[RMDB]
RNA sequence: GGGAACGACUCGAGUAGAGUCGAAAAGAAUAACCAGAAGGCGAGAUGCAAGUCCGACGCCGUUUGGUUCAGACAGGGGCAUAUAGUGUUUCGAAGCAAUCUGAGGGUGAUGAGCUUUCAAUUCUUCACUAAUGCUUCUGUUCGCAGAAGCAUUAGUAAAAGAAACAACAACAACAAC
Reactivity to 2A3 in 0.01 (KOAc 150mM, MgCl2 10mM, bicine 150mM(pH8.5), 24C), signal-to-noise 1, nucleotides 027 to 126: g020a030a120u120a030a020c000c000a010g010a040a010g020g000c000g000a050g010a010u060g050c050a030a080g010u000c030c030g080a080c010g060c000c000g030u030u000u040g010g000u000u080c020a010g030a130c060a040g000g040g020g070c050a030u070a030u090a160g060u030g010u030u020u010c030g020a000a000g000c050a030a020u030c100u040g010a020g000g030g000u060g000a080u050g010a000g000c000u020u020u000c000a020a040u040u000c000u010u000c000
Reactivity to DMS in 0.01 (KOAc 150mM, MgCl2 10mM, bicine 150mM(pH8.5), 24C), signal-to-noise 3, nucleotides 027 to 126: g020a170a150u010a030a070c020c000a010g000a030a050g000g020c000g010a150g000a040u000g000c300a110a120g010u010c010c050g000a080c010g010c010c020g010u010u000u000g020g000u000u000c140a090g010a070c100a050g000g000g010g010c170a030u010a050u010a080g020u010g010u000u000u000c080g000a040a050g000c120a040a020u000c130u010g020a020g000g000g010u010g000a120u010g010a300g000c010u000u020u000c030a040a080u000u000c020u000u010c180